[RMDB]
Chemical mapping of a 170-nucleotide RNA with DMS and 2A3. For DMS, 41,131 sequencing reads were counted.
RNA sequence: GGGAACGACUCGAGUAGAGUCGAAAACGUAGUAAGGAAGAAGACGGAUUUGCCUUCUACCCUGCUUGCACUAAUGGUCAUGCUGUACCGACUCUCUUUAGACUUAAGGGAGGUGCACCUGUAAAAACGCCAGAUGCGUUCGCGCAUCUGAAAAGAAACAACAACAACAAC
Reactivity to DMS in 0.01 (KOAc 150mM, MgCl2 10mM, bicine 150mM(pH8.5), 24C), signal-to-noise 6, nucleotides 027 to 129: c170g000u010a000g000u030a040a030g020g020a130a010g020a000a000g030a000c040g030g040a140u070u080u080g000c050c010u020u020c000u000a030c020c010c010u000g000c040u030u000g030c020a000c050u000a070a040u000g010g010u060c060a090u030g030c030u000g000u010a040c140c020g020a220c060u000c030u030c040u030u000u030a110g020a110c210u030u010a030a020g020g020g010a000g000g000u000g000c080a080c030c050u000g020u030a050a070a050a080a040c100g030c120
Reactivity to 2A3 in 0.01 (KOAc 150mM, MgCl2 10mM, bicine 150mM(pH8.5), 24C), signal-to-noise 9, nucleotides 027 to 129: c050g020u030a010g000u040a020a030g010g010a010a000g000a000a000g010a030c040g070g120a230u120u130u300g040c010c000u000u000c000u010a040c010c000c000u000g010c000u010u030g000c020a000c040u090a080a060u160g000g010u080c040a050u110g060c060u090g080u120a030c020c010g090a090c020u000c000u000c000u020u070u060a160g070a270c060u100u110a040a030g010g000g000a010g000g000u010g000c010a030c010c000u040g070u110a040a060a030a010a010c050g020c010